Chemical mapping of a 177-nucleotide RNA with 2A3 and DMS. 2A3 adducts were read by reverse transcription with SuperScript II with manganese. High DMS reactivity at an A or C suggests that its Watson-Crick edge is free. It was measured as part of the RMDB libraries RFM100 and RFMREP.

RNA sequence: GGGAACGACUCGAGUAGAGUCGAAAAAAUGUCUUGUAGGCGCCCGCCCCCACCGCGCGCCGGACGCGUCCCUGCCCCUUGUACACACCGCCCGUCGCUCCUACCGACUGGGCGCGGCGGCGAGCGUCACUGUGUUAUCUUUCGAGAUAACACAGUGAAAAGAAACAACAACAACAAC
Reactivity to 2A3 in 0.01 (KOAc 150mM, MgCl2 10mM, bicine 150mM(pH8.5), 24C), signal-to-noise 4, nucleotides 027 to 126: a000a010u150g020u040c040u060u120g080u110a060g030g000c020g000c000c010c010g000c000c010c000c010c000a040c030c020g030c000g000c010g000c000c000g000g020a010c020g010c020g030u040c010c010c010u020g020c000c000c000c000u020u090g070u130a040c060a000c010a010c050c030g030c020c010c010g010u010c000g010c000u010c000c000u030a080c030c050g130a090c090u090g000g000g010c000g000c000g000g000c000g000g010c020g010a020g020c020g030u020
Reactivity to DMS in 0.01 (KOAc 150mM, MgCl2 10mM, bicine 150mM(pH8.5), 24C), signal-to-noise 4, nucleotides 027 to 126: a080a060u010g020u010c030u020u000g010u020a100g010g000c010g020c040c040c040g020c020c000c000c010c020a070c170c030g000c150g000c030g020c020c040g000g010a080c060g010c050g000u010c050c030c050u000g000c000c010c020c030u010u010g030u010a080c130a080c090a120c100c030g000c080c010c000g020u000c010g000c030u000c010c000u010a130c080c080g020a060c150u010g010g010g010c060g010c020g030g000c030g010g000c050g000a050g000c060g010u000